[RMDB]
RNA sequence: GGGAACGACUCGAGUAGAGUCGAAAAUACCAUGUCAUCCAUCUGGUUGUCCUGUUCGCAAUUCUUAUGAUAAUUAUAUUAUUUGUCCUGGUUCUAGUGCGUCAAAUUACACCUUACGCAAUUAUUACAGAACAACUACACCAGUUACUAAUGUACCCGUAACCUAUCAAUUCGUUGAUAGGUUACGAAAAGAAACAACAACAACAAC
Reactivity to DMS in 0.01 (KOAc 150mM, MgCl2 10mM, bicine 150mM(pH8.5), 24C), signal-to-noise 3, nucleotides 027 to 156: u000a150c040c020a080u010g000u000c030a100u000c070c040a080u010c060u010g020g000u000u000g010u000c010c080u000g000u000u010c110g010c040a100a110u010u000c040u000u000a100u010g010a100u010a050a110u010u000a170u000a300u000u000a160u010u000u010g000u000c050c040u000g020g020u010u000c050u000a050g020u000g030c030g070u000c060a070a080a140u010u000a070c080a080c080c090u000u000a060c060g020c030a070a080u000u000a060u000u000a090c030a040g010a060a040c020a040a060c060u000a070c080a050c040c020a080g000u000u010a100c070u000a080a060u000g000u000a070c130c030
Reactivity to 2A3 in 0.01 (KOAc 150mM, MgCl2 10mM, bicine 150mM(pH8.5), 24C), signal-to-noise 4, nucleotides 027 to 156: u090a010c000c010a040u080g070u040c040a070u020c090c030a090u050c050u110g040g000u040u070g020u040c040c030u060g030u040u050c040g000c060a060a130u120u030c040u060u220a130u080g040a050u100a210a040u280u120a100u090a140u300u080a140u070u090u070g030u000c000c010u060g050g070u020u060c020u090a010g040u020g060c000g030u030c030a020a020a090u130u100a060c040a080c110c010u090u050a030c020g010c000a040a040u150u040a070u070u090a110c060a020g020a070a040c020a020a020c040u070a010c010a030c050c020a010g030u060u060a080c040u040a030a090u090g040u100a060c000c050